The record gives the reactivity of an RNA of 177 nucleotides to 2A3 and DMS. For 2A3, 1,434 sequencing reads were counted. For 2A3 the reverse transcriptase was SuperScript II with manganese.
[RMDB]
RNA sequence: GGGAACGACUCGAGUAGAGUCGAAAACUUUUCCGACGAGAGUCGGAGCGAGCUAGGCGGAUAGCAUGGCGCAAACUCCAAUUCGAUAACUCGCGUACCAUCGAGAUCGAUGCAGCGAUGAGCGUCGGGAUGCAUGCCGAUUCGUCGGCAUGCAUCCAAAAGAAACAACAACAACAAC
Reactivity to 2A3 in 0.01 (KOAc 150mM, MgCl2 10mM, bicine 150mM(pH8.5), 24C), signal-to-noise 1, nucleotides 027 to 126: c010u020u060u220u000c000c010g020a000c000g050a040g000a000g100u010c010g020g000a000g000c050g010a040g030c010u010a010g120g000c100g060g060a060u050a030g020c060a110u070g010g000c030g000c080a070a110a090c040u050c030c000a030a060u050u000c010g030a020u010a130a110c010u010c000g000c020g040u120a140c010c000a100u130c000g060a050g010a060u150c030g000a020u000g050c040a040g060c060g120a080u040g070a000g000c000g000u000c000g010
Reactivity to DMS in 0.01 (KOAc 150mM, MgCl2 10mM, bicine 150mM(pH8.5), 24C), signal-to-noise 1, nucleotides 027 to 126: c040u000u000u000u000c000c010g020a050c000g000a190g070a190g040u010c030g030g000a030g040c110g000a120g000c070u000a060g040g000c000g010g020a150u030a100g010c080a080u000g030g010c050g000c050a080a040a060c130u000c000c010a030a160u010u010c020g000a040u000a080a080c110u000c000g000c150g010u030a060c300c220a060u000c040g010a160g020a060u010c000g000a020u000g000c080a080g000c050g000a040u000g020a230g020c000g010u000c020g000